[RMDB]
RNA sequence: GGGAACGACUCGAGUAGAGUCGAAAACAAGGAGAAUGAAGACAGCGUGGAAAAGGUGAUCCUCAAGGCCGAUGAAAUCUACGACAAAAAGGCAGAUCAGAUCAUCGCACUGAAAGUCAAGGAGAUGUCCAAGGGCACGAUUCGUCGUGCCCUUGGAAAAAGAAACAACAACAACAAC
Reactivity to DMS in 0.01 (KOAc 150mM, MgCl2 10mM, bicine 150mM(pH8.5), 24C), signal-to-noise 1, nucleotides 027 to 126: c080a090a060g000g020a080g020a040a060u000g020a160a020g000a050c210a040g020c070g080u000g030g000a040a070a070a090g010g000u000g000a010u000c000c010u000c170a120a120g010g000c100c000g020a120u010g040a040a130a110u000c000u000a080c300g000a080c100a080a000a080a090a200g010g000c060a060g030a010u020c150a000g000a040u000c000a010u010c030g010c070a060c080u000g070a100a070a080g000u000c080a110a030g010g030a050g010a010u000g000
Background
Structure probing data (DMS) for a 177-nucleotide construct. For DMS the reverse transcriptase was MarathonRT. Conditions: 150 mM KOAc, 10 mM MgCl2 and 150 mM bicine (pH 8.5), 24 C. The DMS profile rests on 505 reads. Source: RMDB library OK2TRN, as collected in RNAgym.